[RMDB]
RNA sequence: GGGAACGACUCGAGUAGAGUCGAAAAUUACUGUAUCCGCUGCAAUCGUAUAAACUUUGUGUGGCGCAAAGGGAAAAUCGGGGCCCUCACAGUUUGCGUUUUGUUUUAUGCAUUGGUCUACAAAAAGGAUUUCGUCGUGAUUCGUCGUGACGGGGUCAAAAGAAACAACAACAACAAC
Reactivity to DMS in 0.01 (KOAc 150mM, MgCl2 10mM, bicine 150mM(pH8.5), 24C), signal-to-noise 9, nucleotides 027 to 126: u030u030a090c060u010g010u010a080u020c050c010g010c030u010g010c030a050a050u020c090g010u020a080u020a070a070a090c030u000u010u010g020u010g020u020g000g010c060g010c060a030a050a060g010g000g010a070a040a100a090u020c050g010g000g010g000c020c010c020u010c040a040c080a060g000u010u010u010g010c180g010u000u000u010u000g010u010u010u010u010a050u020g010c040a070u010u010g000g000u010c050u000a060c110a030a060a070a100a080g000
Reactivity to 2A3 in 0.01 (KOAc 150mM, MgCl2 10mM, bicine 150mM(pH8.5), 24C), signal-to-noise 9, nucleotides 027 to 126: u100u040a070c030u030g030u060a050u030c010c020g000c030u030g010c010a010a080u050c050g010u080a070u070a150a080a030c020u020u070u050g050u030g050u120g080g000c050g000c090a050a070a060g070g030g040a060a110a010a060u140c060g000g000g060g010c000c010c000u010c000a040c010a030g020u030u040u040g010c010g000u020u010u050u070g100u020u090u040u060a070u080g030c050a040u020u120g040g010u030c050u060a060c080a020a110a030a020a010g120